[RMDB]
RNA sequence: GGGAACGACUCGAGUAGAGUCGAAAAAGUCAGAGGGCGCUACCAUGCAAACUAGGGCUGGCUACUCUUGCACAGAAUCACAUCUCGAUAAUUGUCAGUGCAAGAAGAACAAUUAUACCAUUUAAUGAAAACGUUUACCUGUUCGCAGGUAAACGAACCUUUCAGUGGUCUUCGGACCACUGAAAGGAAAAGAAACAACAACAACAAC
Reactivity to 2A3 in 0.01 (KOAc 150mM, MgCl2 10mM, bicine 150mM(pH8.5), 24C), signal-to-noise 3, nucleotides 027 to 156: a000g040u050c000a010g040a000g050g010g010c030g000c030u070a190c120c050a170u230g000c040a010a080a070c050u070a050g000g050g030c000u000g000g020c010u040a030c000u000c000u000u000g000c000a000c000a010g120a060a040u070c030a050c010a240u130c110u140c150g160a090u110a200a060u140u150g060u100c080a040g000u020g000c000a010a000g030a060a000g000a010a010c030a050a000u230u080a090u060a090c000c050a040u010u120u260a160a130u110g080a000a000a000a090c000g010u000u000u000a000c020c000u000g010u030u110c140g020c120a000g000g000u000a000a000a000c000g000a000a000
The record gives the reactivity of an RNA of 207 nucleotides to 2A3. For 2A3, 1,092 sequencing reads were counted. Reactivities are rounded to 0.1 and cut off at 0 and 3. Reactivities are given for positions 27 through 156.